Structure probing data (2A3) for a 177-nucleotide construct. The RNA was probed in 150 mM KOAc, 10 mM MgCl2 and 150 mM bicine (pH 8.5) at 24 C. It was measured as part of the RMDB library RFM100.

RNA sequence: GGGAACGACUCGAGUAGAGUCGAAAAAGUGGUCAUACGUGACCACAAGCAUGGUACGAAUGCUGGUCAGGAUUACAUCUUUCUUAAUGGCUAUCAUCCUGGCUAUUUAUUUGCCAUGCCACCCUAAGUAAUCUGGCACGUUCGCGUGCCAGAUUACAAAAGAAACAACAACAACAAC
Reactivity to 2A3 in 0.01 (KOAc 150mM, MgCl2 10mM, bicine 150mM(pH8.5), 24C), signal-to-noise 2, nucleotides 027 to 126: a000g000u010g020g000u000c000a000u070a070c290g210u030g000a000c000c000a000c000a000a000g000c000a000u020g020g000u090a120c060g070a160a020u000g000c000u020g030g010u010c000a000g000g010a000u020u070a010c000a060u000c110u100u300u000c050u100u240a090a010u180g100g000c050u050a100u190c020a000u000c040c000u020g000g000c000u000a000u000u000u070a000u000u010u030g000c000c000a000u040g000c000c000a050c030c010c000u000a160a000